[RMDB]
RNA sequence: GGGAACGACUCGAGUAGAGUCGAAAAGAUAUGGAACGUGACGGUUGGAGAUGUCGGAAACGACGGAAUUAACGCGUCCGUUCCUAAGUCAAAGACAACAGGACUCGUUCGCGAGUCCUGUUGUCAAGGUUAGCAUGAACUUCGGUUCAUGCUAACCAAAAGAAACAACAACAACAAC
Reactivity to DMS in 0.01 (KOAc 150mM, MgCl2 10mM, bicine 150mM(pH8.5), 24C), signal-to-noise 1, nucleotides 027 to 126: g000a030u000a300u000g000g000a010a040c020g000u000g020a000c010g040g000u000u000g000g030a110g010a300u010g000u000c020g010g000a080a070a120c000g010a010c000g000g000a210a100u000u000a010a020c020g000c000g020u000c000c000g000u000u000c000c020u010a010a040g010u000c060a110a090a090g000a000c010a000a000c000a000g010g000a050c000u000c000g060u000u030c210g040c000g010a000g000u000c000c000u000g010u020u000g020u000c020a000a040
Reactivity to 2A3 in 0.01 (KOAc 150mM, MgCl2 10mM, bicine 150mM(pH8.5), 24C), signal-to-noise 1, nucleotides 027 to 126: g000a020u090a050u130g030g020a000a020c050g110u250g000a000c000g070g000u000u030g050g000a120g020a040u070g030u030c050g040g070a100a070a020c000g020a000c020g030g010a050a040u030u050a030a030c040g010c000g300u030c000c020g000u020u010c000c000u000a040a000g000u000c010a090a110a040g000a000c020a010a010c020a000g040g010a000c020u010c000g050u140u120c300g000c000g140a000g000u030c000c000u000g020u020u000g000u000c000a000a000
Record summary: Conditions: 150 mM KOAc, 10 mM MgCl2 and 150 mM bicine (pH 8.5), 24 C. Structure probing data (DMS and 2A3) for a 177-nucleotide construct. The 2A3 profile rests on 1,689 reads. High DMS reactivity at an A or C suggests that its Watson-Crick edge is free.